[RMDB]
RNA sequence: GGGAACGACUCGAGUAGAGUCGAAAACAGGUGUGUCUGAAUUAAUUCCAACGGAACAAGUUCAACCAGAAGUGGUUGUGGAAUCGACUCCAGUUGCAGAAGUUCAAUCUGAAAUGGUUCAACCAGAGUAAAUGUAACCUUUCGAGGUUACAUUUACAAAAGAAACAACAACAACAAC
Reactivity to DMS in 0.01 (KOAc 150mM, MgCl2 10mM, bicine 150mM(pH8.5), 24C), signal-to-noise 7, nucleotides 027 to 126: c070a070g000g020u010g020u000g000u010c040u010g010a060a090u010u010a120a190u010u000c040c030a080a140c150g010g000a050a060c110a080a130g010u010u010c010a030a040c010c010a030g010a130a080g000u010g010g010u000u000g010u010g010g000a070a090u000c060g010a050c070u010c010c020a070g000u000u010g000c120a030g000a100a170g000u000u000c080a050a090u000c040u010g000a070a050a060u000g000g000u000u010c120a070a100c030c030a080g010a210
Reactivity to 2A3 in 0.01 (KOAc 150mM, MgCl2 10mM, bicine 150mM(pH8.5), 24C), signal-to-noise 3, nucleotides 027 to 126: c020a050g020g060u070g020u020g050u110c030u060g080a070a040u060u120a050a070u160u060c020c010a050a040c050g020g060a030a060c030a090a070g020u080u080c030a010a020c000c000a000g030a270a030g180u070g030g010u020u010g000u060g060g070a040a060u030c020g030a010c010u000c030c040a090g040u060u090g030c060a020g010a130a000g060u070u020c020a040a090u050c050u010g020a030a060a090u120g060g000u080u160c030a040a080c030c010a010g040a010